[RMDB]
Chemical mapping of a 177-nucleotide RNA with DMS and 2A3. The reactions ran in a buffer of 150 mM KOAc, 10 mM MgCl2 and 150 mM bicine (pH 8.5), at 24 C. DMS (dimethyl sulfate) methylates the pairing face of unpaired adenines and cytosines.

RNA sequence: GGGAACGACUCGAGUAGAGUCGAAAAGAGGGGUGGUCCUGCGGGCGCGAGGAAGGACACCCGAAGAAAGGAAGGGUGAAAACCCUGUUUCGGCGGGAAUUACUCCUGUCGGCCGCUGGGCACUCCCGUAAACGUAGAUGUUCGCAUCUACGUUUACAAAAGAAACAACAACAACAAC
Reactivity to DMS in 0.01 (KOAc 150mM, MgCl2 10mM, bicine 150mM(pH8.5), 24C), signal-to-noise 2, nucleotides 027 to 126: g000a110g010g010g010g030u010g020g000u000c020c010u010g000c060g010g000g010c030g000c080g030a070g010g010a060a030g010g000a190c300a060c000c010c000g000a020a010g010a010a030a040g010g030a110a040g000g000g020u000g000a070a060a070a040c000c000c000u000g000u000u000u000c000g020g020c030g000g010g010a060a050u000u010a140c010u000c010c000u000g000u000c010g000g000c010c000g010c010u000g000g020g000c020a030c010u000c010c000c030
Reactivity to 2A3 in 0.01 (KOAc 150mM, MgCl2 10mM, bicine 150mM(pH8.5), 24C), signal-to-noise 2, nucleotides 027 to 126: g220a060g000g020g000g000u050g030g080u080c010c000u030g000c010g010g020g060c020g010c020g090a030g000g020a110a070g030g000a010c000a020c030c000c000g000a020a000g040a020a030a010g170g240a030a030g040g000g000u020g000a040a010a020a010c000c000c000u010g050u000u010u000c010g000g000c010g000g000g000a080a060u120u060a050c000u010c000c000u020g130u100c020g010g070c010c000g000c000u000g000g000g000c010a010c000u010c030c000c000